An RNA of 177 nucleotides, treated with DMS and read out base by base. It was measured as part of the RMDB library OK2TST. The reactions ran in a buffer of 150 mM KOAc, 10 mM MgCl2 and 150 mM bicine (pH 8.5), at 24 C.
[RMDB]
RNA sequence: GGGAACGACUCGAGUAGAGUCGAAAACGCACGGUGCUUGCCACGCUGCACCGCCGCGCGCCGCUGAUCGUGCAGCAGGCGCUUUACUGGGAUGAGGGAAUGCCGACGCUUCCCUGCGUCAGCAUCAUAAAUCAGCCCCAUUCGUGGGGCUGAUUUAAAAAGAAACAACAACAACAAC
Reactivity to DMS in 0.01 (KOAc 150mM, MgCl2 10mM, bicine 150mM(pH8.5), 24C), signal-to-noise 1, nucleotides 027 to 126: c100g040c070a170c050g000g000u000g010c000u000u030g010c030c120a110c140g020c160u010g050c000a000c030c020g000c120c060g000c110g020c020g020c030c020g000c060u000g000a110u010c210g010u000g000c000a020g020c010a080g010g010c040g000c080u000u000u010a050c110u020g010g010g000a060u000g000a090g000g040g000a110a030u000g010c010c000g020a020c020g000c000u000u000c030c020c060u000g010c020g000u000c000a040g000c000a020u010c120a160